RNA sequence: GGGAACGACUCGAGUAGAGUCGAAAACUGUCUAAUCAUGAGUAUUGGAAUAGGAUCUGGGGGCAGUGAGGGGGUGGCAGCCACGUGUGGCAGAGAAAAGCACACAAGGAAAGAGCACCCAGGACUGGUACCAUUACAACUUCGGUUGUAAUGGUACAAAAGAAACAACAACAACAAC
Reactivity to DMS in 0.01 (KOAc 150mM, MgCl2 10mM, bicine 150mM(pH8.5), 24C), signal-to-noise 2, nucleotides 027 to 126: c020u000g030u020c010u010a010a030u000c050a200u030g000a150g010u000a050u000u000g020g000a080a060u010a040g000g000a060u000c080u010g000g020g000g020g010c040a050g030u010g020a150g010g010g010g010g000u020g020g020c070a190g000c020c040a060c280g000u010g030u000g010g010c050a040g000a120g000a070a050a060a100g020c030a040c020a000c030a160a120g010g000a020a050a130g010a160g000c060a060c050c000c020a080g010g010a080c100u000g010
Reactivity to 2A3 in 0.01 (KOAc 150mM, MgCl2 10mM, bicine 150mM(pH8.5), 24C), signal-to-noise 2, nucleotides 027 to 126: c010u010g050u000c050u040a080a020u030c030a160u290g180a070g160u180a090u100u060g030g000a130a120u030a150g040g050a050u030c040u100g000g000g000g000g000c030a030g000u040g050a100g060g050g020g000g000u020g030g010c010a010g030c010c010a030c040g010u050g010u030g100g090c040a010g050a010g040a210a120a010a010g000c010a000c000a010c010a050a120g020g000a030a060a030g020a050g000c000a020c030c000c010a010g040g010a000c010u030g020